[RMDB]
RNA sequence: GGGAACGACUCGAGUAGAGUCGAAAAGUACCUGUACUUCGGUACAGGUACAAAAAACCUUUGUGGAUGUUAGUGAUGACCCUACCAACCCAUUGGGUUGUGUAGGCAAGCUGGGCAUCCACUCUGGUAAAAAGUUUAACGAUUCGUCGUUAAACAAUACUUAGACUCUGUUCGCAGAGUCUAAGUAAAAAGAAACAACAACAACAAC
Reactivity to DMS in 0.01 (KOAc 150mM, MgCl2 10mM, bicine 150mM(pH8.5), 24C), signal-to-noise 1, nucleotides 027 to 156: g010u010a000c000c000u010g000u000a010c000u000u000c280g050g000u030a030c000a030g010g020u010a000c000a010a060a040a150a080a020c000c000u000u000u000g040u000g020g000a020u000g040u010u010a040g030u010g000a160u010g010a060c300c010c000u000a020c010c000a000a000c000c000c000a300u010u020g000g000g000u000u000g020u000g000u000a030g000g000c000a000a090g010c010u000g060g020g010c010a020u000c030c000a010c000u000c010u020g000g010u000a050a060a030a070a140g020u000u000u000a020a020c000g020a100u000u000c300g050u000c000g000u010u000a000a010a010c000a090a180
Reactivity to 2A3 in 0.01 (KOAc 150mM, MgCl2 10mM, bicine 150mM(pH8.5), 24C), signal-to-noise 2, nucleotides 027 to 156: g000u000a010c010c000u000g010u000a000c010u020u060c280g060g000u000a010c010a000g000g000u000a000c000a000a000a010a000a000a000c000c010u000u000u000g000u000g000g000a000u000g000u060u020a060g020u010g140a280u150g090a160c000c000c000u000a000c000c000a000a000c000c000c140a300u140u300g050g000g000u050u040g020u070g000u010a010g000g000c000a000a040g020c010u040g020g090g020c000a000u000c000c000a000c000u000c010u000g000g030u120a070a110a020a040a020g010u010u000u010a000a020c020g010a020u060u110c300g060u020c000g000u130u010a010a000a000c000a000a010

An RNA of 207 nucleotides, treated with DMS and 2A3 and read out base by base. Source: RMDB library RNAMAK, as collected in RNAgym.